[RMDB]
RNA sequence: GGGAACGACUCGAGUAGAGUCGAAAAUUUGCAGGUAACUCAGAAAGCGUUUCUUGAGCUUCCCGGGGAUGAGCGUCUGGGAGAGCUGAUUCUGCAGACCGGCUAGGAGCCGCAGGGCGUUCUCCGGCGACCCCAACUUGUUCGCAAGUUGGGGUCGAAAAGAAACAACAACAACAAC
Reactivity to 2A3 in 0.01 (KOAc 150mM, MgCl2 10mM, bicine 150mM(pH8.5), 24C), signal-to-noise 2, nucleotides 027 to 126: u120u100u050g040c030a000g060g020u090a130a100c020u030c090a040g120a120a040a000g090c050g050u000u000u080c010u050u140g030a040g010c010u040u030c010c000c010g010g000g000g000a100u120g020a030g000c030g030u040c010u070g050g030g000a160g000a000g040c030u030g010a110u050u040c020u070g030c020a000g070a030c030c010g010g070c000u110a160g110g130a020g070c000c000g050c030a040g000g040g070c040g020u030u000c020u010c000c020g000g020
Source: RMDB library RFM100, as collected in RNAgym. This 177-nucleotide RNA was probed chemically with 2A3. The reactions ran in a buffer of 150 mM KOAc, 10 mM MgCl2 and 150 mM bicine (pH 8.5), at 24 C.